Chemical mapping of a 177-nucleotide RNA with DMS and 2A3. For DMS, 155,820 sequencing reads were counted. The RNA was probed in 150 mM KOAc, 10 mM MgCl2 and 150 mM bicine (pH 8.5) at 24 C.
[RMDB]
RNA sequence: GGGAACGACUCGAGUAGAGUCGAAAAGGGACGAGUUGGAUUUUUUCCGUGAGAACGGAAGGGGUCUAGCUCAAUGGCGUGUUGCUAGAAUUUCGGGAAGAGCUGAGUUCCGAAGAGUACGCCAUGACUACAUCUUAGUAUUCGUACUAGGGUGUAGAAAAGAAACAACAACAACAAC
Reactivity to DMS in 0.01 (KOAc 150mM, MgCl2 10mM, bicine 150mM(pH8.5), 24C), signal-to-noise 9, nucleotides 027 to 126: g010g010g010a120c170g010a010g020u000u000g010g000a000u000u000u000u000u000u000c000c000g010u000g000a260g000a220a010c000g000g000a010a010g000g000g000g000u000c000u000a010g010c000u000c010a100a020u000g000g010c010g020u000g000u000u000g010c040u000a090g000a060a080u000u000u000c010g010g000g010a040a110g010a190g010c110u000g000a070g000u000u000c000c020g000a040a040g000a100g000u000a020c010g010c000c000a010u000g000a250
Reactivity to 2A3 in 0.01 (KOAc 150mM, MgCl2 10mM, bicine 150mM(pH8.5), 24C), signal-to-noise 9, nucleotides 027 to 126: g070g000g060a020c050g000a020g000u010u010g000g010a010u000u010u000u000u000u000c000c000g000u010g020a070g010a030a000c000g000g000a000a000g000g000g000g000u000c000u000a000g000c000u000c010a010a010u010g000g000c000g000u010g010u030u080g040c010u020a040g050a080a080u110u080u050c010g000g000g030a050a040g050a080g160c100u080g040a030g060u030u000c010c000g020a050a000g010a000g010u010a000c000g000c000c000a010u030g030a010